[RMDB]
RNA sequence: GGGAACGACUCGAGUAGAGUCGAAAAGAUAUGGAAAGCGCUCGUCCAAGGACUAUUCGGAAACGAACGAAUCCUUGAGACGUGAGGCGCUUUCCUAAGUCAAAAUCUCCUACUUCGGUAGGAGAAACAGGAAGUAACCGUUCGCGGUUACUUCCUGAAAAGAAACAACAACAACAAC
Reactivity to DMS in 0.01 (KOAc 150mM, MgCl2 10mM, bicine 150mM(pH8.5), 24C), signal-to-noise 1, nucleotides 027 to 126: g000a060u020a300u000g000g000a010a000a020g000c000g050c030u000c000g010u010c000c000a010a010g000g000a030c120u000a300u020u010c020g010g000a080a080a190c010g000a000a060c080g000a070a120u010c000c000u000u000g010a130g010a000c000g020u000g040a050g020g000c000g010c000u000u000u000c000c000u000a000a060g000u010c020a130a050a090a130u000c000u010c000c000u000a000c000u000u040c240g020g010u000a020g000g010a010g000a000a080a120
About this RNA:
Chemical mapping of a 177-nucleotide RNA with DMS. The reactions ran in a buffer of 150 mM KOAc, 10 mM MgCl2 and 150 mM bicine (pH 8.5), at 24 C. For DMS the reverse transcriptase was MarathonRT. DMS (dimethyl sulfate) methylates the pairing face of unpaired adenines and cytosines. It was measured as part of the RMDB library TTRDEL. The DMS profile rests on 751 reads. Reactivities are rounded to 0.1 and cut off at 0 and 3.